An RNA of 177 nucleotides, treated with DMS and read out base by base.
It was measured as part of the RMDB library M2PK50.
High DMS reactivity at an A or C suggests that its Watson-Crick edge is free.
For DMS, 2,364 sequencing reads were counted.
Values are in units of 0.01, from 0 to 300, in steps of 10.
[RMDB]
RNA sequence: GGGAACGACUCGAGUAGAGUCGAAAAACAUUGGCCUUCGGGCCAAUGUACUGGAUAUAAAGCCGAAAGGCUACGCAUUCCUUAUUUGGCGAAAGCCUGCGAGAUUAUGUAAGUUCGCUUACAUAAACCUAUCCCCAUGAUUCGUCAUGGGGAUAGGAAAAGAAACAACAACAACAAC
Reactivity to DMS in 0.01 (KOAc 150mM, MgCl2 10mM, bicine 150mM(pH8.5), 24C), signal-to-noise 3, nucleotides 027 to 126: a030c020a010u000u000g000g010c000c010u000u010c170g020g010g050c020c000a000a000u000g000u000a050c150u010g010g000a090u000a100u010a070a110a050g030c000c000g000a130a040a120g030g010c010u000a020c140g020c070a150u000u000c000c020u000u020a080u010u000u010g010g010c000g010a110a080a200g030c010c010u000g010c150g010a140g010a180u000u000a000u000g000u000a020a000g000u000u010c280g010c000u000u000a010c000a000u000a000a030a180